[RMDB]
RNA sequence: GGGAACGACUCGAGUAGAGUCGAAAAGAUAUGGAUGGAGCUCAAACAUCGCGGAUCGGAAACGAUCCGAACUACGAUGGUAGAGCUAUGAAGUCCUAAGUCAAAGGUUUGGGUUCGCCCAAACCAACAUCAUAAAAAGCUUCGGCUUUUUAUGAUGAAAAGAAACAACAACAACAAC
Reactivity to 2A3 in 0.01 (KOAc 150mM, MgCl2 10mM, bicine 150mM(pH8.5), 24C), signal-to-noise 3, nucleotides 027 to 126: g020a010u070a050u120g000g000a000u010g020g050a010g000c010u000c020a280a300a040c010a000u000c010g000c000g040g010a000u010c010g000g020a070a050a050c000g000a010u010c020c000g000a020a000c040u160a030c040g000a000u010g030g010u070a040g020a010g000c000u040a260u020g010a020a000g010u000c020c000u030a120a010g050u050c060a120a060a110g020g000u000u010u010g030g010g030u040u070c260g100c010c010c000a000a000a000c000c000a000a010
Reactivity to DMS in 0.01 (KOAc 150mM, MgCl2 10mM, bicine 150mM(pH8.5), 24C), signal-to-noise 5, nucleotides 027 to 126: g000a040u000a300u010g000g010a010u000g000g000a030g020c000u000c000a050a170a300c000a000u000c000g010c000g000g000a010u000c000g000g000a080a080a190c020g000a010u000c000c000g000a010a030c130u010a210c030g010a010u000g000g000u000a300g000a010g010c000u000a090u000g010a160a200g000u000c000c000u000a040a160g000u000c030a110a140a100g000g010u000u010u000g000g000g020u000u010c260g030c010c000c000a000a010a010c000c000a050a090

Annotation:
Structure probing data (2A3 and DMS) for a 177-nucleotide construct. For DMS, 4,898 sequencing reads were counted. For DMS the reverse transcriptase was MarathonRT. For 2A3 the reverse transcriptase was SuperScript II with manganese. The RNA was probed in 150 mM KOAc, 10 mM MgCl2 and 150 mM bicine (pH 8.5) at 24 C. For 2A3, 7,919 sequencing reads were counted.